RNA sequence: GGGAACGACUCGAGUAGAGUCGAAAAGAUUUACCAUAGAAUAACAAAUUUAUGAUUUUGUGUCUUUGUUUGUUCGGACACAUUAUCUAUACGAAUAAGAACGGUUGAGGGCAUUCGUAUUCAACUGCCUUCACUUCUAGUUCGCUAGAAGUGAAGGAAAAGAAACAACAACAACAAC
Reactivity to DMS in 0.01 (KOAc 150mM, MgCl2 10mM, bicine 150mM(pH8.5), 24C), signal-to-noise 1, nucleotides 027 to 126: g010a150u020u000u000a170c000c010a160u000a040g020a140a110u020a090a130c050a060a130a100u000u000u030a070u020g010a020u000u000u000u000g040u000g020u000c000u000u010u010g010u000u010u000g010u000u000c010g000g010a010c000a010c000a020u000u010a000u000c020u010a090u010a020c210g010a080a030u010a110a130g000a100a140c080g020g000u000u010g000a040g060g010g010c060a050u010u000c140g050u000a070u010u000c070a030a050c110u010g020
Reactivity to 2A3 in 0.01 (KOAc 150mM, MgCl2 10mM, bicine 150mM(pH8.5), 24C), signal-to-noise 2, nucleotides 027 to 126: g030a000u130u150u210a160c030c000a040u090a110g200a200a120u230a170a020c030a020a100a100u140u210u090a130u220g000a000u000u000u000u010g000u000g010u010c010u000u100u090g070u160u110u070g070u030u090c000g000g010a000c000a000c020a010u000u000a000u000c000u000a020u010a020c070g050a030a000u080a130a050g070a060a020c020g030g090u050u100g010a080g040g030g000c050a040u080u090c080g000u070a060u040u060c030a060a030c030u040g030
Record summary: Structure probing data (DMS and 2A3) for a 177-nucleotide construct. The RNA was probed in 150 mM KOAc, 10 mM MgCl2 and 150 mM bicine (pH 8.5) at 24 C. For DMS, 784 sequencing reads were counted. 2A3 adducts were read by reverse transcription with SuperScript II with manganese. It was measured as part of the RMDB library RFMREP. For 2A3, 938 sequencing reads were counted.